[RMDB]
RNA sequence: GGGAACGACUCGAGUAGAGUCGAAAAGAUAUGGAUAACGGUGACCCACCCUUGGACCUCGGAAACGAGCUAGGGUGCACCCUCUUAUCCUAAGUCAAAGUACCGUCCGGUUCGCCGGACGGUACAAGUUUGAGAUCUACUUCGGUAGAUCUCAAACAAAAGAAACAACAACAACAAC
Reactivity to 2A3 in 0.01 (KOAc 150mM, MgCl2 10mM, bicine 150mM(pH8.5), 24C), signal-to-noise 1, nucleotides 027 to 126: g050a030u080a040u170g000g000a030u010a040a060c300g020g030u070g130a130c100c070c020a010c000c000c040u070u160g150g080a240c030c030u000c030g040g000a120a080a050c000g050a020g010c040u030a020g000g020g040u020g030c000a000c010c020c000u040c020u020u000a000u030c010c000u020a110a060g040u040c090a180a130a040g010u000a010c020c000g000u000c010c010g000g040u090u060c300g010c170c000g000g000a000c000g000g010u010a000c010a000a000
Reactivity to DMS in 0.01 (KOAc 150mM, MgCl2 10mM, bicine 150mM(pH8.5), 24C), signal-to-noise 2, nucleotides 027 to 126: g000a010u000a300u030g000g000a010u010a040a010c060g000g000u000g000a130c230c240c050a000c010c010c010u010u020g020g000a130c300c000u000c000g000g000a120a070a170c020g000a000g030c040u000a030g000g010g030u010g000c000a000c000c000c010u000c010u000u000a000u010c000c000u000a050a120g000u010c020a130a130a100g010u010a010c000c000g000u000c000c000g030g030u000u010c170g010c000c010g000g000a000c020g010g020u000a000c000a040a050